[RMDB]
Structure probing data (DMS and 2A3) for a 207-nucleotide construct. It was measured as part of the RMDB library M2RFPK. The RNA was probed in 150 mM KOAc, 10 mM MgCl2 and 150 mM bicine (pH 8.5) at 24 C. For DMS the reverse transcriptase was MarathonRT. For 2A3 the reverse transcriptase was SuperScript II with manganese. The DMS profile rests on 3,863 reads.
RNA sequence: GGGAACGACUCGAGUAGAGUCGAAAAAAGCCUCGGUUCGAAAUCAUCGGGAGUGAUCCAGAUGACGGUCCUGCCAUGAGACCGCAACGAGAGCAUGUCGCAUCGAAUGGACUCGGGGAGUCGGCAGUGUAGUGGGGAUGGUUCGCCAUCCCCACAAUCAUAUGCUAUGGUUCGCCAUAGCAUAUGAAAAAGAAACAACAACAACAAC
Reactivity to DMS in 0.01 (KOAc 150mM, MgCl2 10mM, bicine 150mM(pH8.5), 24C), signal-to-noise 1, nucleotides 027 to 156: a120a060g000c010c000u010c000g020g000u000u000c010g010a050a130a040u000c010a030u010c000g020g040g000a060g010u000g020a250u000c010c000a070g000a080u040g020a040c000g010g010u000c010c030u000g000c000c070a140u050g010a050g000a040c020c000g050c020a020a070c030g000a090g000a140g020c070a130u000g030u000c070g030c060a100u010c060g010a050a300u020g000g010a050c020u000c040g060g010g000g000a130g020u000c020g000g000c040a160g020u000g030u010a120g010u000g000g000g040g010a050u000g000g000u000u010c070g000c000c020a010u010c000c000c000c010a000c000a000a150
Reactivity to 2A3 in 0.01 (KOAc 150mM, MgCl2 10mM, bicine 150mM(pH8.5), 24C), signal-to-noise 2, nucleotides 027 to 156: a000a000g040c000c010u010c020g060g010u050u060c060g070a080a090a110u040c010a000u010c030g000g000g000a020g040u100g050a060u020c000c000a030g020a090u080g030a040c000g000g020u010c020c020u040g140c070c000a110u090g020a030g020a110c000c020g000c050a010a050c010g010a010g000a030g030c030a040u180g060u120c060g010c100a120u050c050g040a060a060u050g030g040a000c030u010c080g030g010g010g000a020g050u040c030g000g060c050a070g040u030g080u300a140g010u010g010g020g000g010a000u000g000g070u060u070c160g020c040c000a000u000c000c000c000c000a000c000a000a000